[RMDB]
RNA sequence: GGGAACGACUCGAGUAGAGUCGAAAACCCGUUCAUUUCGAUGAACGGGAGUGGGUAACCCUAGGUCCAGUAGUGGGACCCGUAGUGGCCGUGGGACCAGUAAAGAGUUAACAUUCGUGUUAACUAAUAUUCACGGAUAGUUCGCUAUCCGUGAAUAAAAAGAAACAACAACAACAAC
Reactivity to 2A3 in 0.01 (KOAc 150mM, MgCl2 10mM, bicine 150mM(pH8.5), 24C), signal-to-noise 2, nucleotides 027 to 126: c000c000c000g000u020u010c000a020u010u000u160c240g160a020u010g000a010a000c000g000g030g010a010g070u110g040g080g040u110a120a130c030c000c000u020a090g000g010u010c000c070a060g020u100a050g200u300g010g040g080a050c000c020c010g010u130a090g070u130g090g030c050c030g000u060g050g000g010a020c020c000a020g030u080a040a130a030g140a010g020u010u000a000a000c000a000u080u120c210g030u050g020u030u010a000a000c000u010a060a030
Reactivity to DMS in 0.01 (KOAc 150mM, MgCl2 10mM, bicine 150mM(pH8.5), 24C), signal-to-noise 3, nucleotides 027 to 126: c000c000c000g010u000u000c000a000u000u010u000c170g020a020u000g000a020a000c000g000g010g000a020g020u020g010g000g010u010a100a120c030c010c000u010a160g000g020u000c010c020a130g010u000a100g020u020g010g010g000a050c000c020c030g020u000a100g020u020g020g000c020c020g000u010g000g010g000a060c030c030a150g010u020a060a090a130g010a030g000u000u000a000a000c000a050u000u020c190g010u000g000u000u000a000a010c000u010a060a130